Source: RMDB library OK1LIB, as collected in RNAgym. An RNA of 177 nucleotides, treated with DMS and 2A3 and read out base by base. Conditions: 150 mM KOAc, 10 mM MgCl2 and 150 mM bicine (pH 8.5), 24 C. For DMS the reverse transcriptase was MarathonRT. The DMS profile rests on 1,462 reads.
RNA sequence: GGGAACGACUCGAGUAGAGUCGAAAAAGCUGGUGAGAUGACGUGGAGUCAGGAAGCCCAGUUGUCAGGAUCAAGUCCAAGAGUGGACGUAAAAGUCAGUGAGAGUGGGGAUUUUCGGCUUCGCCACGUGCCAAGCUAUCUUCGGAUAGCUUGGCACAAAAGAAACAACAACAACAAC
Reactivity to DMS in 0.01 (KOAc 150mM, MgCl2 10mM, bicine 150mM(pH8.5), 24C), signal-to-noise 1, nucleotides 027 to 126: a110g000c020u000g000g000u000g000a100g000a060u020g010a010c010g010u050g010g000a160g020u000c000a030g010g000a010a120g010c000c000c010a070g000u000u000g060u000c000a030g000g000a070u000c050a130a140g000u000c010c030a100a230g000a130g050u020g050g020a010c000g000u080a050a210a030a090g000u030c050a090g020u040g010a100g000a030g060u120g010g000g050g000a130u020u010u030u000c020g020g000c030u000u020c030g000c020c020a040c260
Reactivity to 2A3 in 0.01 (KOAc 150mM, MgCl2 10mM, bicine 150mM(pH8.5), 24C), signal-to-noise 1, nucleotides 027 to 126: a000g000c020u040g030g020u000g010a180g010a120u070g000a000c000g000u000g010g010a000g000u000c020a030g000g000a060a010g000c000c000c000a000g020u050u050g090u050c050a050g060g060a040u150c000a000a130g050u050c010c010a010a010g230a000g300u100g000g000a040c000g010u090a000a000a080a000g040u000c000a040g000u000g100a080g000a060g070u070g030g140g020g010a020u050u000u120u140c000g040g000c000u070u100c040g030c040c000a000c080